RNA sequence: GGGAACGACUCGAGUAGAGUCGAAAAGCGCAGUCCGUGCAGACCACGGCAGAGUCGCAUUUGCGUUGCUCGAGGCGCAACCGAUACCGCCAAAGAGCCCGCCGCCCGAAGGCGCCCGCGUGCGCAUCAAGGGACAAAUUUUCGAAUUUGUCCCUUGAAAAGAAACAACAACAACAAC
Reactivity to 2A3 in 0.01 (KOAc 150mM, MgCl2 10mM, bicine 150mM(pH8.5), 24C), signal-to-noise 4, nucleotides 027 to 126: g020c010g010c030a020g050u070c010c000g000u020g000c050a040g040a150c070c000a010c020g020g000c030a010g030a040g190u250c010g000c040a050u060u040u120g010c010g040u040u180g010c010u020c020g020a040g000g010c010g000c030a010a020c030c000g030a040u080a140c020c030g020c000c010a080a160a010g030a010g010c020c020c000g000c010c000g030c000c010c010g040a080a060g080g000c010g020c000c020c000g130c040g030u180g010c020g010c010a050u020
Reactivity to DMS in 0.01 (KOAc 150mM, MgCl2 10mM, bicine 150mM(pH8.5), 24C), signal-to-noise 5, nucleotides 027 to 126: g000c010g000c040a090g010u050c010c000g000u000g020c160a170g020a200c280c000a000c010g000g020c030a180g020a110g010u010c030g020c030a140u010u010u010g000c030g020u010u010g010c010u010c010g000a300g000g010c010g000c110a080a090c100c050g000a090u030a050c180c030g020c010c010a010a120a160g000a050g010c020c220c030g030c020c140g020c010c000c030g010a100a100g000g010c000g010c000c010c210g020c210g010u040g020c020g000c040a110u020